[RMDB]
Structure probing data (DMS and 2A3) for a 177-nucleotide construct. It was measured as part of the RMDB library TTRDEL. For 2A3, 2,535 sequencing reads were counted. DMS adducts were read by reverse transcription with MarathonRT. Reactivities are rounded to 0.1 and cut off at 0 and 3.

RNA sequence: GGGAACGACUCGAGUAGAGUCGAAAAGAUAUGGAUAGAGCUUUUGACGAGGUGUACUCGGAAACGAGUACUUCUCGAUAAGCUCGUCCUAAGUCAAAACCUACUGUAGCUUCGGCUACAGUAGGAACCAAUUUGAGAACUUCGGUUCUCAAAUUGGAAAAGAAACAACAACAACAAC
Reactivity to DMS in 0.01 (KOAc 150mM, MgCl2 10mM, bicine 150mM(pH8.5), 24C), signal-to-noise 1, nucleotides 027 to 126: g000a040u000a260u010g000g020a010u000a090g000a010g030c010u000u010u000u010g010a180c080g010a010g010g000u020g000u000a010c000u000c000g010g000a030a080a160c010g040a000g000u000a000c000u000u000c000u000c010g000a060u000a020a000g000c000u010c000g000u010c010c000u010a000a150g020u030c040a160a080a070a200c000c000u000a010c000u010g000u000a000g010c000u010u000c220g040g000c000u000a000c000a010g000u000a000g010g000a000a150
Reactivity to 2A3 in 0.01 (KOAc 150mM, MgCl2 10mM, bicine 150mM(pH8.5), 24C), signal-to-noise 2, nucleotides 027 to 126: g020a010u020a030u090g000g020a000u040a300g040a150g000c050u090u140u180u250g300a270c220g000a000g050g050u020g000u000a000c010u000c000g000g030a030a030a010c010g000a000g010u010a010c020u030u000c000u010c010g010a000u010a010a010g000c000u010c020g010u000c000c000u020a070a020g030u050c040a030a010a090a280c010c010u010a000c000u010g010u000a010g020c000u060u050c300g110g000c000u010a000c000a010g000u000a000g010g000a000a000